[RMDB]
Structure probing data (2A3) for a 177-nucleotide construct. Reactivities are given for positions 27 through 126. Conditions: 150 mM KOAc, 10 mM MgCl2 and 150 mM bicine (pH 8.5), 24 C. The 2A3 profile rests on 403 reads. The data come from the RNA Mapping Database (RMDB), library OK1LIB.
RNA sequence: GGGAACGACUCGAGUAGAGUCGAAAACACCGGCCGUACGCGGCCGGUGAAGUAUUGACGAAUGCUACCGUAGAAGUAUUCAGGUCUCAUAACUACGGAUAAACAUGGCAGGUACGCCUGCCAUGAACGCCCAGGGGUAUUUCGAUACCCCUGGGCGAAAAGAAACAACAACAACAAC
Reactivity to 2A3 in 0.01 (KOAc 150mM, MgCl2 10mM, bicine 150mM(pH8.5), 24C), signal-to-noise 1, nucleotides 027 to 126: c000a080c050c020g100g000c000c000g070u100a100c180g220c000g080g160c000c000g000g000u000g000a000a000g080u020a020u030u130g250a110c270g030a000a000u080g000c000u030a160c000c000g000u000a080g240a270a000g000u020a000u000u030c030a090g020g050u000c050u060c110a110u170a130a000c080u110a000c000g020g020a170u130a000a040a060c000a000u000g000g020c000a000g060g060u130a030c300g060c160c000u000g000c000c000a000u000g000a000a000